[RMDB]
This 207-nucleotide RNA was probed chemically with 2A3.
For 2A3 the reverse transcriptase was SuperScript II with manganese.
Values cover nucleotides 27 to 156.
It was measured as part of the RMDB library OK3TST.
Conditions: 150 mM KOAc, 10 mM MgCl2 and 150 mM bicine (pH 8.5), 24 C.
RNA sequence: GGGAACGACUCGAGUAGAGUCGAAAAGAUCGAUCGUUCGUUCGUACGUACUCACGUGUGAUCACGAGAACACGUACGAUCGUGAGUACACUCUCGAGUGUACGAUCACUCGUUCGAUCACGAACUCACUCGUGAGUACACACUCGUGUUCGAGAUCGCCUGUGUCCCUCUUCGGAGGGACACAGGCAAAAGAAACAACAACAACAAC
Reactivity to 2A3 in 0.01 (KOAc 150mM, MgCl2 10mM, bicine 150mM(pH8.5), 24C), signal-to-noise 2, nucleotides 027 to 156: g030a020u040c010g010a020u020c060g040u160u000c010g010u070u010c030g000u060a020c100g000u000a000c030u010c000a000c050g010u010g050u060g180a180u140c030a010c070g020a020g010a020a020c050a010c120g000u000a000c020g030a000u080c070g000u010g010a000g100u040a010c000a010c000u070c010u110c210g110a020g000u040g010u000a000c020g020a060u010c010a010c020u020c000g000u060u000c020g000a020u020c000a020c080g040a030a010c000u000c010a020c000u010c010g020u020g050a030g030u040a040c070a000c000a020c010u030c000g090u050g080u190u070c050g030a010g010a100u110c140